[RMDB]
RNA sequence: GGGAACGACUCGAGUAGAGUCGAAAACUGAUGUUCGUACACGGUAGAGCUGCACCGUAUUUAAGAAGUUCGCACAACACUCAUUAUGUUACCCUCUAUGGAGGUCUUAACUACAUGUGUGUUGACGAUCUUGCGCUGCACUUUGUGAACCCUAUGCCAGAUGUCAUGUUUUCGAACAUGACAUCUGAAAAGAAACAACAACAACAAC
Reactivity to 2A3 in 0.01 (KOAc 150mM, MgCl2 10mM, bicine 150mM(pH8.5), 24C), signal-to-noise 6, nucleotides 027 to 156: c030u110g060a110u130g140u160u160c130g070u140a040c040a020c080g050g010u070a050g020a030g050c120u050g000c040a010c020c020g020u050a160u080u230u120a130a100g080a040a020g040u020u020c020g000c030a170c010a100a010c010a000c000u010c000a000u010u050a020u110g010u000u010a010c000c050c000u000c020u050a170u280g250g000a020g000g010u000c110u080u040a010a000c000u010a010c020a060u010g020u000g000u010g000u010u010g000a000c000g000a010u010c000u010u060g010c010g000c010u010g010c000a010c020u040u040u100g090u050g110a080a090c020c010c010u050a090u190g080c050
Reactivity to DMS in 0.01 (KOAc 150mM, MgCl2 10mM, bicine 150mM(pH8.5), 24C), signal-to-noise 2, nucleotides 027 to 156: c000u000g000a170u000g010u000u000c040g030u010a130c020a090c090g000g010u000a090g000a090g040c090u000g020c020a050c020c010g040u000a070u000u000u000a100a170g000a120a040g030u010u000c040g070c020a150c010a030a040c010a020c000u010c010a020u010u000a240u000g000u000u000a030c220c000c010u000c010u000a130u010g060g040a020g030g010u000c040u000u000a010a000c010u000a240c280a030u000g010u000g020u000g010u000u000g000a040c050g030a030u000c010u000u000g010c050g030c030u020g000c010a080c030u010u000u000g000u000g010a100a100c030c020c000u000a070u000g000c110
An RNA of 207 nucleotides, treated with 2A3 and DMS and read out base by base. 2A3 adducts were read by reverse transcription with SuperScript II with manganese. It was measured as part of the RMDB library OK3TST. DMS adducts were read by reverse transcription with MarathonRT. The RNA was probed in 150 mM KOAc, 10 mM MgCl2 and 150 mM bicine (pH 8.5) at 24 C. The 2A3 profile rests on 5,430 reads.